The data come from the RNA Mapping Database (RMDB), library OK1LIB.
An RNA of 177 nucleotides, treated with DMS and 2A3 and read out base by base.
The DMS profile rests on 41,572 reads.
The 2A3 profile rests on 79,692 reads.
Conditions: 150 mM KOAc, 10 mM MgCl2 and 150 mM bicine (pH 8.5), 24 C.
RNA sequence: GGGAACGACUCGAGUAGAGUCGAAAAAUACUCAAGCAGCAGGCAGCGUAGAGCAGCGCCUCCUGCGUGAGCAGGUACGUCUAGUCUCUCUCGGACGGAGGCUGCGCUACGACUCCGCGGCCAAAAAGAGUGGUCAUGAGUUCGCUCAUGAUCAUUCAAAAGAAACAACAACAACAAC
Reactivity to DMS in 0.01 (KOAc 150mM, MgCl2 10mM, bicine 150mM(pH8.5), 24C), signal-to-noise 9, nucleotides 027 to 126: a080u030a100c020u000c030a180a120g010c030a030g010c030a060g000g000c110a030g020c010g010u010a020g000a060g010c000a020g010c050g010c090c070u000c010c000u000g010c010g000u030g000a110g000c080a020g000g000u020a130c060g010u020c050u020a120g000u020c060u010c060u010c040u010c070g000g000a050c050g000g010a120g000g020c010u000g000c010g010c010u000a020c010g000a090c010u000c020c010g010c000g000g000c010c170a060a070a060a090a090
Reactivity to 2A3 in 0.01 (KOAc 150mM, MgCl2 10mM, bicine 150mM(pH8.5), 24C), signal-to-noise 9, nucleotides 027 to 126: a000u180a050c020u020c050a030a040g000c020a010g000c050a080g070g000c070a010g000c020g010u020a010g010a010g030c030a010g020c020g100c080c010u010c010c010u070g030c010g010u010g000a010g010c150a020g020g060u190a040c040g060u060c150u160a090g030u050c010u010c000u000c010u020c050g040g040a080c060g020g010a020g040g000c010u030g000c020g000c010u030a020c030g240a270c010u000c010c010g000c000g010g010c010c000a050a090a020a030a010